The record gives the reactivity of an RNA of 177 nucleotides to 2A3 and DMS.
RNA sequence: GGGAACGACUCGAGUAGAGUCGAAAAGAUAUGGAUCGCCAAGGGAGCUGAUAUUCGGAAACGAAUAAUAGCAUCGAUCUUGGUCGAUCCUAAGUCAAAGAACUGUCAACUUCGGUUGACAGUUCAACUAAUUCAGUGACUUCGGUCACUGAAUUAGAAAAGAAACAACAACAACAAC
Reactivity to 2A3 in 0.01 (KOAc 150mM, MgCl2 10mM, bicine 150mM(pH8.5), 24C), signal-to-noise 2, nucleotides 027 to 126: g000a000u040a000u090g000g000a000u000c000g010c010c010a020a000g070g080g050a170g010c000u010g020a060u010a010u050u020c000g010g000a000a010a010c000g000a000a010u030a040a040u130a020g030c020a040u300c180g290a160u020c040u000u010g010g010u110c060g000a010u000c010c000u000a010a000g010u020c010a180a000a220g000a010a000c000u000g020u020c000a010a000c020u040u140c300g200g000u020u000g010a000c000a000g000u000u000c000a010a000
Reactivity to DMS in 0.01 (KOAc 150mM, MgCl2 10mM, bicine 150mM(pH8.5), 24C), signal-to-noise 3, nucleotides 027 to 126: g000a020u000a150u000g000g000a010u000c000g020c010c000a010a000g020g000g000a150g030c010u010g010a110u000a010u000u000c000g000g000a020a050a100c000g010a010a000u010a010a100u010a010g040c000a300u010c300g000a070u000c000u010u000g000g020u010c040g030a010u000c000c000u000a000a070g000u000c020a130a150a110g020a010a010c010u000g000u000c000a000a030c000u000u020c220g020g010u000u000g020a010c000a000g010u000u000c010a030a150

For 2A3, 6,086 sequencing reads were counted. The RNA was probed in 150 mM KOAc, 10 mM MgCl2 and 150 mM bicine (pH 8.5) at 24 C.